An RNA of 177 nucleotides, treated with 2A3 and DMS and read out base by base. DMS (dimethyl sulfate) methylates the pairing face of unpaired adenines and cytosines. For 2A3 the reverse transcriptase was SuperScript II with manganese.

RNA sequence: GGGAACGACUCGAGUAGAGUCGAAAAGAUAUGGACUUGGACAUGAGUUGAUAUCGGAAACGAUAUCUGCUCAACAGCCAACAUGUCCUAAGUCAAAGAUUGCCACUCGUUCGCGAGUGGCAAUCAAGAAGACUUAUUGGUUCGCCAAUAAGUCUUCAAAAGAAACAACAACAACAAC
Reactivity to 2A3 in 0.01 (KOAc 150mM, MgCl2 10mM, bicine 150mM(pH8.5), 24C), signal-to-noise 3, nucleotides 027 to 126: g060a040u140a070u300g080g000a010c010u030u030g010g010a020c010a150u060g000a010g010u020u030g030a010u010a000u010c000g000g030a060a070a030c010g000a000u000a010u000c000u010g020c010u030c020a030a020c060a030g080c020c010a060a040c080a160u140g010u000c000c010u050a070a020g010u030c040a050a100a060g010a000u010u000g020c000c010a000c020u000c010g090u100u120c300g010c000g160a000g010u000g000g000c030a000a000u000c000a000a000
Reactivity to DMS in 0.01 (KOAc 150mM, MgCl2 10mM, bicine 150mM(pH8.5), 24C), signal-to-noise 5, nucleotides 027 to 126: g010a110u000a180u010g010g010a020c020u010u000g020g000a040c060a120u000g000a020g000u010u010g010a010u000a010u000c000g020g010a130a070a220c010g010a000u010a000u000c000u000g000c000u000c020a040a120c260a140g000c060c060a040a120c190a040u000g000u000c000c000u000a030a050g010u010c030a080a150a140g000a010u000u000g000c000c000a010c000u000c000g020u000u010c210g030c010g000a000g020u000g000g010c000a000a000u000c000a060a110

For DMS, 6,027 sequencing reads were counted.
Values cover nucleotides 27 to 126.
The RNA was probed in 150 mM KOAc, 10 mM MgCl2 and 150 mM bicine (pH 8.5) at 24 C.
DMS adducts were read by reverse transcription with MarathonRT.